Conditions: 150 mM KOAc, 10 mM MgCl2 and 150 mM bicine (pH 8.5), 24 C.
Chemical mapping of a 177-nucleotide RNA with 2A3 and DMS.
The 2A3 profile rests on 788 reads.
Source: RMDB library OK2TRN, as collected in RNAgym.
DMS adducts were read by reverse transcription with MarathonRT.
Reactivities are given for positions 27 through 126.

[RMDB]
RNA sequence: GGGAACGACUCGAGUAGAGUCGAAAAUCUGGAACUCGGUCACCGCGUAUAGCCAGGCUCCGUGGUGCGGUACUUCGAUUCGGGUGAAACCAACAGCUCCCAGUCGCUUUACGACUGUGCCGAUCAGGCUCAAUAGAGCCUUCGGGCUCUAUUGAGCAAAAGAAACAACAACAACAAC
Reactivity to 2A3 in 0.01 (KOAc 150mM, MgCl2 10mM, bicine 150mM(pH8.5), 24C), signal-to-noise 1, nucleotides 027 to 126: u000c000u000g070g060a040a010c040u010c060g020g100u160c090a030c050c010g000c010g040u160a070u120a210g030c000c010a040g140g000c070u070c060c020g050u050g020g020u090g000c000g000g020u040a090c040u040u100c060g050a090u120u130c000g020g020g000u030g050a160a030a020c000c030a000a080c030a050g030c000u000c000c010c000a020g000u000c010g010c170u150u180u170a100c050g080a030c030u040g030u120g100c040c000g040a090u180c040a020g080
Reactivity to DMS in 0.01 (KOAc 150mM, MgCl2 10mM, bicine 150mM(pH8.5), 24C), signal-to-noise 2, nucleotides 027 to 126: u010c010u020g000g000a090a070c080u010c030g020g030u000c070a080c060c040g020c030g020u010a100u010a130g020c010c060a070g030g000c060u000c090c040g070u010g050g040u020g010c040g000g020u000a050c160u020u010c110g020a120u000u000c080g000g000g000u000g010a100a080a160c090c100a130a110c170a090g000c060u000c050c030c010a040g010u000c010g010c120u010u000u000a110c080g010a050c040u000g020u000g000c020c020g000a070u000c150a040g000